[RMDB]
RNA sequence: GGGAACGACUCGAGUAGAGUCGAAAAGGCGUUGGCUGGCCUCCUAAAAAGCCGACAAAACAAUAAAUGCCGAACCUAAGGCUAAAUGCGAAAUUAUCAGUUUCUCUGAACUCUCUGAGCAAAGAUUAGCUGCUUAAUUAGCAAAAGUUGUUAUUUAGGAGCAUGAUAAGUUCGCUUAUCAUGCUCCAAAAGAAACAACAACAACAAC
Reactivity to 2A3 in 0.01 (KOAc 150mM, MgCl2 10mM, bicine 150mM(pH8.5), 24C), signal-to-noise 1, nucleotides 027 to 156: g000g010c020g000u070u010g000g020c000u010g060g000c010c020u060c000c020u130a150a070a010a010a000g010c060c010g020a050c050a040a080a090a000c050a150a010u250a230a090a020u190g000c010c010g060a150a170c050c090u100a090a060g000g000c020u060a070a100a070u100g000c010g000a040a000a000u010u000a000u040c000a000g000u000u020u000c000u000c010u020g130a140a070c020u020c010u010c200u300g030a000g000c050a010a010a010g010a010u010u020a000g020c020u000g020c000u000u000a000a020u020u010a020g000c000a000a000a000a200g010u020u000g010u000u020a090u010u010u050a060
The record gives the reactivity of an RNA of 207 nucleotides to 2A3. The data come from the RNA Mapping Database (RMDB), library RSTRND. For 2A3 the reverse transcriptase was SuperScript II with manganese. The reactions ran in a buffer of 150 mM KOAc, 10 mM MgCl2 and 150 mM bicine (pH 8.5), at 24 C.